RNA sequence: GGGAACGACUCGAGUAGAGUCGAAAAAUACAUUCCUGUGCCGGCAAUACAGUUUGUAUGGAGGUCUCAAUGGCUCGGAAGUGCCAGCAAACCGGCGUAGAUAUUAGCAGACGUAUGGGCGUAAGACAAAAGAGAAUGAUGUUCGCAUCAUUCUCAAGCUAGUAAUCAACUUCGGUUGAUUACUAGCAAAAGAAACAACAACAACAAC
Reactivity to DMS in 0.01 (KOAc 150mM, MgCl2 10mM, bicine 150mM(pH8.5), 24C), signal-to-noise 2, nucleotides 027 to 156: a060u010a090c020a090u000u000c300c030u000g030u000g020c010c010g000g000c030a050a120u040a060c020a100g000u000u000u000g000u010a060u010g000g030a180g030g030u000c020u000c020a110a120u010g020g010c010u000c000g070g010a190a110g040u000g000c010c030a170g020c050a030a140a100c010c020g020g020c030g040u000a080g010a150u000a100u000u010a040g030c040a080g000a070c090g020u000a070u000g000g010g030c040g030u000a060a090g000a130c090a030a030a110a120g000a040g030a050a000u010g010a020u010g000u000u000c270g000c010a020u010c000a020u000u000c000u000c000a000a070
Reactivity to 2A3 in 0.01 (KOAc 150mM, MgCl2 10mM, bicine 150mM(pH8.5), 24C), signal-to-noise 3, nucleotides 027 to 156: a000u130a030c040a020u010u080c020c000u020g060u070g000c020c010g020g030c060a050a060u040a050c040a090g050u070u080u070g010u090a050u030g070g010a030g060g100u000c040u000c050a060a170u080g020g000c040u030c060g070g040a120a010g050u000g070c000c010a020g010c060a050a010a040c000c000g030g000c010g010u020a030g040a070u060a070u240u130a040g040c030a020g010a060c040g050u100a070u150g050g030g000c000g020u020a050a010g100a040c080a040a110a030a010g000a000g000a000a000u000g000a000u010g010u020u030c110g000c100a000u010c000a000u010u000c000u000c000a010a000